[RMDB]
RNA sequence: GGGAACGACUCGAGUAGAGUCGAAAAAGACGGAAACCCAUCGACUGUCACCAGAUGCUGCAUCACCUGAUCACUGAUGGCUCCACGGUAUCCGGCGGUACAACUGAAUACUUGUAGCUGCCUUUUGAAAAGGAGUUCAUCUUCGGAUGAACUCCAACGUUAAGGUAACGUUCGCGUUACCUUAACGAAAAGAAACAACAACAACAAC
Reactivity to 2A3 in 0.01 (KOAc 150mM, MgCl2 10mM, bicine 150mM(pH8.5), 24C), signal-to-noise 4, nucleotides 027 to 156: a000g040a020c030g050g020a040a050a020c040c010c020a060u090c060g090a080c040u040g010u050c020a020c050c030a010g030a070u090g020c040u050g030c020a040u040c010a030c030c030u060g040a050u060c030a030c040u020g010a020u060g070g000c010u030c020c020a060c050g030g000u070a100u050c040c040g000g010c010g010g000u020a040c010a030a010c060u170g070a120a050u160a160c020u040u040g020u030a030g090c010u020g000c000c000u120u130u070u130g100a070a070a020a020g000g000a000g000u000u000c000a000u000c000u020u040c100g120g000a000u000g000a000a000c000u000c000c000a000a000
Reactivity to DMS in 0.01 (KOAc 150mM, MgCl2 10mM, bicine 150mM(pH8.5), 24C), signal-to-noise 2, nucleotides 027 to 156: a090g010a100c070g000g010a090a090a150c110c020c000a110u000c030g010a110c050u000g020u010c030a070c010c050a090g030a060u000g020c060u020g000c060a140u000c040a050c020c010u000g030a150u000c110a100c090u010g010a080u000g010g000c040u000c010c090a100c140g020g000u000a030u000c000c010g020g020c010g070g040u000a090c070a100a090c020u010g020a040a060u000a010c030u000u000g040u000a120g050c040u000g010c010c080u010u010u000u010g000a050a060a150a140g030g010a020g040u000u000c000a020u000c000u000u000c260g030g040a000u000g000a000a000c000u000c000c000a040a020

The record gives the reactivity of an RNA of 207 nucleotides to 2A3 and DMS. The 2A3 profile rests on 3,509 reads. DMS adducts were read by reverse transcription with MarathonRT. Reactivities are given for positions 27 through 156.